[RMDB]
RNA sequence: GGGAACGACUCGAGUAGAGUCGAAAAUGUUUUUUAUGGGGAACUUUCUUCGGCGGAGGCGGUCUUAAACCGAAUGCGAAACGCGAUUUCAGGGUCGAAAUCGGUAUUUUUGCUGGCGGGAUGCUGGUAAACUGGGAGAAUUCGUUCUCCCAGUUUAAAAAGAAACAACAACAACAAC
Reactivity to DMS in 0.01 (KOAc 150mM, MgCl2 10mM, bicine 150mM(pH8.5), 24C), signal-to-noise 5, nucleotides 027 to 126: u000g000u000u020u010u020u000u030a080u030g000g010g000g010a070a060c050u010u010u010c030u010u010c060g000g030c060g020g000a100g000g020c020g010g000u000c050u020u010a050a100a110c030c030g010a070a070u020g000c020g010a020a050a040c200g010c020g000a030u000u000u010c040a170g010g010g010u030c150g010a010a020a020u010c020g010g000u010a010u010u010u010u020u010g020c010u010g000g020c050g010g000g010a060u000g010c030u010g000g000
Reactivity to 2A3 in 0.01 (KOAc 150mM, MgCl2 10mM, bicine 150mM(pH8.5), 24C), signal-to-noise 3, nucleotides 027 to 126: u040g030u010u030u020u020u090u110a190u170g040g000g010g020a040a040c040u130u080u070c010u040u040c040g060g000c040g040g040a020g040g010c020g030g000u010c060u040u100a080a040a020c000c020g080a070a040u110g020c000g070a040a120a010c080g000c000g050a010u020u030u040c020a060g280g090g020u150c050g020a000a000a000u000c000g000g010u040a130u010u090u000u070u110g010c010u030g020g010c000g000g040g010a030u090g020c040u020g020g000
Conditions: 150 mM KOAc, 10 mM MgCl2 and 150 mM bicine (pH 8.5), 24 C. Chemical mapping of a 177-nucleotide RNA with DMS and 2A3. The 2A3 profile rests on 1,654 reads. Values cover nucleotides 27 to 126. 2A3 adducts were read by reverse transcription with SuperScript II with manganese.